[RMDB]
RNA sequence: GGGAACGACUCGAGUAGAGUCGAAAAUGAACGUGCGUACAUCUCUCUCAGACUGUACGACAGUCUGACUCUCUCGCACUCUAGUUCCACGAGAGAGAGAGAGCGUUGGAACAAGGGUGAAAUGAAAAACCUUAACAUAGUUCGCUAUGUUAAGGUUAAAAGAAACAACAACAACAAC
Reactivity to DMS in 0.01 (KOAc 150mM, MgCl2 10mM, bicine 150mM(pH8.5), 24C), signal-to-noise 9, nucleotides 027 to 126: u010g010a070a080c110g010u000g010c030g010u010a060c060a080u000c010u000c020u000c050u000c030a100g010a080c110u000g000u000a070c170g000a090c020a050g000u000c010u000g000a100c060u000c010u000c010u000c020g000c060a040c020u000c040u000a100g010u000u000c010c020a070c060g000a050g000a070g000a050g000a050g010a040g010a060g010c070g010u000u000g010g000a030a030c030a110a080g000g000g020u000g000a060a060a080u010g010a060a070a050
Reactivity to 2A3 in 0.01 (KOAc 150mM, MgCl2 10mM, bicine 150mM(pH8.5), 24C), signal-to-noise 7, nucleotides 027 to 126: u150g020a090a010c070g060u140g050c020g010u080a030c030a110u010c020u000c000u000c010u000c030a020g030a140c070u030g010u100a090c090g100a060c060a000g030u000c020u040g010a040c000u000c000u000c010u000c040g020c020a040c010u020c020u020a040g020u020u020c010c000a010c010g030a030g010a010g000a010g000a000g000a000g010a050g010c040g080u110u100g020g010a030a020c020a050a040g050g000g010u080g050a060a060a110u160g100a120a030a030
An RNA of 177 nucleotides, treated with DMS and 2A3 and read out base by base. Conditions: 150 mM KOAc, 10 mM MgCl2 and 150 mM bicine (pH 8.5), 24 C. For DMS the reverse transcriptase was MarathonRT. For 2A3, 15,873 sequencing reads were counted.